An RNA of 177 nucleotides, treated with DMS and 2A3 and read out base by base.
RNA sequence: GGGAACGACUCGAGUAGAGUCGAAAAGAUAUGGAAGGACAUGAUGGGCUGGUCGUUGAAACAUUAGCUCUCGGAAACGAGAGCUAAUGUGGAGACCUGAAAUUUCAUCAACAGCCUUCCUAAGUCAGAUUAAGUGUUUGUUCGCAAACACUUAAUCAAAAGAAACAACAACAACAAC
Reactivity to DMS in 0.01 (KOAc 150mM, MgCl2 10mM, bicine 150mM(pH8.5), 24C), signal-to-noise 6, nucleotides 027 to 126: g000a060u000a300u010g000g010a020a010g000g010a050c080a260u000g010a010u010g000g010g000c070u000g000g010u000c020g010u000u010g010a300a160a020c000a020u000u000a010g010c000u000c000u000c000g000g000a060a130a250c000g010a020g000a010g000c000u000a000a000u000g010u000g000g000a060g020a010c000c000u010g000a070a100a110u000u010u000c010a020u010c000a040a080c300a250g000c010c010u000u000c000c000u000a040a090g000u000c070a150
Reactivity to 2A3 in 0.01 (KOAc 150mM, MgCl2 10mM, bicine 150mM(pH8.5), 24C), signal-to-noise 3, nucleotides 027 to 126: g020a040u100a080u230g000g010a010a020g000g020a030c080a170u160g010a010u010g010g060g020c080u030g000g030u010c010g140u240u050g010a020a020a020c010a010u000u000a000g000c000u000c000u000c010g030g020a100a090a070c030g010a000g010a000g000c010u000a000a000u000g000u000g000g000a010g010a000c000c000u030g040a120a120a070u150u180u100c000a000u010c010a000a130c050a150g060c000c000u010u020c000c000u000a100a000g040u020c080a010

Source: RMDB library TTRINS, as collected in RNAgym.